This 177-nucleotide RNA was probed chemically with 2A3 and DMS. The reactions ran in a buffer of 150 mM KOAc, 10 mM MgCl2 and 150 mM bicine (pH 8.5), at 24 C. For 2A3 the reverse transcriptase was SuperScript II with manganese.
RNA sequence: GGGAACGACUCGAGUAGAGUCGAAAAAGGAGCUGUCCUUAGUACGAGAGGACCGGGAUGGACGUACCGCUGGUGUACCAGUUGUCUCGCCAGAGGCAUAGCUGGGUAGCUAUGUACGGAGGGGAUAGCUUGUGUCGUAGUUCGCUACGACACAAGCAAAAGAAACAACAACAACAAC
Reactivity to 2A3 in 0.01 (KOAc 150mM, MgCl2 10mM, bicine 150mM(pH8.5), 24C), signal-to-noise 1, nucleotides 027 to 126: a000g140g020a100g000c120u060g000u070c000c050u030u060a070g050u130a090c140g060a050g030a010g200g050a010c060c050g000g010g000a080u080g020g010a000c000g010u020a020c020c000g000c010u000g000g000u020g120u300a020c000c000a020g000u010u010g020u000c000u000c010g090c060c050a050g000a010g010g030c030a030u090a040g010c000u020g060g000g000u010a010g000c000u000a020u240g010u000a010c040g000g010a040g060g020g000g010a020u010a080
Reactivity to DMS in 0.01 (KOAc 150mM, MgCl2 10mM, bicine 150mM(pH8.5), 24C), signal-to-noise 2, nucleotides 027 to 126: a060g000g000a110g010c160u000g020u010c000c000u000u000a110g010u020a090c210g020a110g020a070g010g010a140c000c040g000g000g000a120u000g000g010a140c070g000u010a010c000c020g000c000u000g000g010u000g000u030a300c000c000a020g000u000u000g030u000c040u000c000g010c220c300a120g000a020g030g000c010a020u000a080g010c020u010g010g010g010u000a300g000c000u000a010u000g010u010a020c020g000g000a200g020g000g000g000a100u000a140